[RMDB]
RNA sequence: GGGAACGACUCGAGUAGAGUCGAAAAUCCUAAGUCACGACAUGGUUGGCUUGAUUCGCAACAGCCAUUCGGAAACGAAUGGACAUGCGAAUCGAAAUCAACCAACAGCGUGAUAUGGAAAAAGGUAACAGUUACGGUUCGCCGUAACUGUUACCAAGUAGCUUAUCUUCUUCGGAAGAUAAGCUACAAAAGAAACAACAACAACAAC
Reactivity to DMS in 0.01 (KOAc 150mM, MgCl2 10mM, bicine 150mM(pH8.5), 24C), signal-to-noise 2, nucleotides 027 to 156: u000c000c000u000a110a230g020u020c000a060c020g010a090c160a300u000g000g000u000u020g010g030c070u000u000g000a030u000u010c010g010c010a050a060c120a240g000c000c000a020u010u000c000g030g000a230a120a300c020g010a020a000u000g020g000a080c070a300u000g000c000g010a030a020u000c000g000a020a050a070u000c030a040a050c000c010a020a080c090a210g020c000g020u000g030a050u000a140u000g000g000a050a110a100a190a120g040g080u000a000a000c000a000g000u000u010a000c000g000g000u000u020c300g050c000c010g050u030a000a000c000u000g000u000u000a000c000c000a000a030
Reactivity to 2A3 in 0.01 (KOAc 150mM, MgCl2 10mM, bicine 150mM(pH8.5), 24C), signal-to-noise 6, nucleotides 027 to 156: u030c000c010u030a090a030g030u000c000a000c030g050a150c150a130u070g010g000u000u000g010g020c030u020u100g000a000u000u000c000g000c000a020a070c030a230g030c000c010a010u000u000c000g040g020a090a080a060c010g000a000a000u010g010g020a040c040a070u020g000c000g000a000a000u000c000g010a000a010a010u050c000a000a010c020c010a020a030c050a020g040c000g000u010g000a010u010a100u110g090g040a050a060a030a070a050g010g000u010a000a000c000a000g000u000u000a000c010g020g050u040u100c250g030c080c000g000u000a000a000c000u000g000u000u000a000c000c000a000a000